[RMDB]
This 207-nucleotide RNA was probed chemically with 2A3 and DMS. For 2A3, 11,106 sequencing reads were counted. The DMS profile rests on 5,297 reads. The data come from the RNA Mapping Database (RMDB), library RNAMAK. The RNA was probed in 150 mM KOAc, 10 mM MgCl2 and 150 mM bicine (pH 8.5) at 24 C. DMS adducts were read by reverse transcription with MarathonRT.
RNA sequence: GGGAACGACUCGAGUAGAGUCGAAAAAGAGGUUUCGACCUCUCCCCUUGGGGUCGAAUUGUAGCAUGGCUUUUGACGCUCUGAAGCCUCCACGGAGCGAUAAGCCAUCGCGCAGAUAAUUCGACGGAGGCACCCCCGGCCCGUGAUUCGUCACGAAGUUAUUACACUGUUUCGACAGUGUAAUAACAAAAGAAACAACAACAACAAC
Reactivity to 2A3 in 0.01 (KOAc 150mM, MgCl2 10mM, bicine 150mM(pH8.5), 24C), signal-to-noise 8, nucleotides 027 to 156: a000g050a020g030g020u100u130u200c180g110a080c000c000u010c030u050c010c000c000c000u060u170g050g000g000g010u000c000g000a020a010u020u030g050u050a060g000c060a050u050g030g000c020u030u070u140u230g170a110c040g000c000u000c000u020g070a140a040g040c010c030u040c020c020a050c000g000g000a000g010c010g080a080u040a090a010g000c000c000a010u030c070g000c010g000c050a010g040a240u120a090a040u110u020c020g010a020c030g040g020a010g000g010c010a060c000c000c010c000c000g030g050c030c020c000g010u010g010a030u050u130c210g050u030c120a010c020g020a080a010
Reactivity to DMS in 0.01 (KOAc 150mM, MgCl2 10mM, bicine 150mM(pH8.5), 24C), signal-to-noise 2, nucleotides 027 to 156: a070g020a050g030g000u000u010u010c170g010a060c010c000u000c010u000c020c010c000c080u000u000g000g030g030g010u010c010g000a020a070u000u010g050u000a190g010c010a080u000g020g000c020u000u010u000u000g000a250c080g030c020u000c010u000g000a040a110g010c010c000u000c020c010a300c000g020g000a030g030c030g010a090u000a050a050g000c000c010a020u010c100g070c020g000c060a160g010a100u000a050a140u000u000c020g010a060c040g040g040a040g110g010c020a260c010c000c000c000c000g010g000c080c080c010g020u010g000a120u000u000c150g010u000c010a050c020g010a130a150